[RMDB]
RNA sequence: GGGAACGACUCGAGUAGAGUCGAAAAAGUGGCUAAGAAGGAAUAAAUGGUUAGAUGUAGGACCUAUAUCAGAGCAUGACUUCUAUGCAAUUAUAAGAACUAUGAAUAAGGCUCUUGCAGAUAACUAAUUAAUCGACCAGUUCGCUGGUCGAUUAAUAAAAGAAACAACAACAACAAC
Reactivity to DMS in 0.01 (KOAc 150mM, MgCl2 10mM, bicine 150mM(pH8.5), 24C), signal-to-noise 1, nucleotides 027 to 126: a090g020u000g000g060c040u020a040a130g000a090a150g000g020a110a070u000a130a080a160u010g000g000u000u000a020g000a140u010g000u000a000g000g020a010c060c010u020a050u020a060u000c070a020g000a090g000c050a060u000g000a160c110u000u000c160u000a020u010g000c090a030a110u000u000a110u000a050a110g010a040a110c090u010a110u010g000a040a050u000a010a080g020g040c150u000c020u000u000g010c030a030g010a150u000a000a000c040u050a040
Background: This 177-nucleotide RNA was probed chemically with DMS. For DMS the reverse transcriptase was MarathonRT. Conditions: 150 mM KOAc, 10 mM MgCl2 and 150 mM bicine (pH 8.5), 24 C. The data come from the RNA Mapping Database (RMDB), library OK2TST.